[RMDB]
RNA sequence: GGGAACGACUCGAGUAGAGUCGAAAACAGCAAAAAGGAACCGAUUCCCACCAAGUUCGGAAAGACAUACCGGGCGAGGCGCUGAAGAAAGAAUCUCGCUUCAGACACCCCAAGGACUCGACUGAAGAAUGCACGCCAUCGUUCGCGAUGGCGUGAACUAUUAGUGGAUGUUCGCAUCCACUAAUAGAAAAGAAACAACAACAACAAC
Reactivity to DMS in 0.01 (KOAc 150mM, MgCl2 10mM, bicine 150mM(pH8.5), 24C), signal-to-noise 1, nucleotides 027 to 156: c060a230g000c020a010a010a060a140a150g000g000a080a160c030c010g010a170u000u000c010c020c000a130c030c050a160a190g010u010u000c000g000g010a090a050a100g000a080c100a120u020a040c010c000g010g000g040c020g010a150g000g020c060g050c040u030g020a000a060g010a040a100a140g000a160a110u000c040u000c030g020c000u010u000c010a000g020a300c060a110c010c000c020c060a090a270g000g010a000c020u000c000g010a110c070u000g000a080a050g010a090a110u000g020c010a020c000g000c030c000a000u020c000g060u000u000c260g030c060g010a010u010g020g000c050g030u010g000a000a060
Reactivity to 2A3 in 0.01 (KOAc 150mM, MgCl2 10mM, bicine 150mM(pH8.5), 24C), signal-to-noise 3, nucleotides 027 to 156: c020a010g040c040a000a120a050a030a030g130g030a070a020c040c030g050a100u030u020c020c000c000a010c020c030a060a010g000u030u040c020g050g040a130a080a030g140a050c030a050u150a060c010c020g000g000g000c020g010a020g000g010c040g000c060u040g010a030a010g020a040a200a030g060a060a090u080c080u070c160g010c000u020u000c010a060g050a110c010a050c020c010c020c040a040a050g070g000a030c040u040c150g030a040c010u040g010a080a000g050a110a060u170g040c000a010c000g000c020c000a010u000c010g040u100u080c180g020c020g050a000u000g000g040c000g000u010g000a000a000

Structure probing data (DMS and 2A3) for a 207-nucleotide construct. The data come from the RNA Mapping Database (RMDB), library M2RFPK. The DMS profile rests on 1,631 reads. The RNA was probed in 150 mM KOAc, 10 mM MgCl2 and 150 mM bicine (pH 8.5) at 24 C.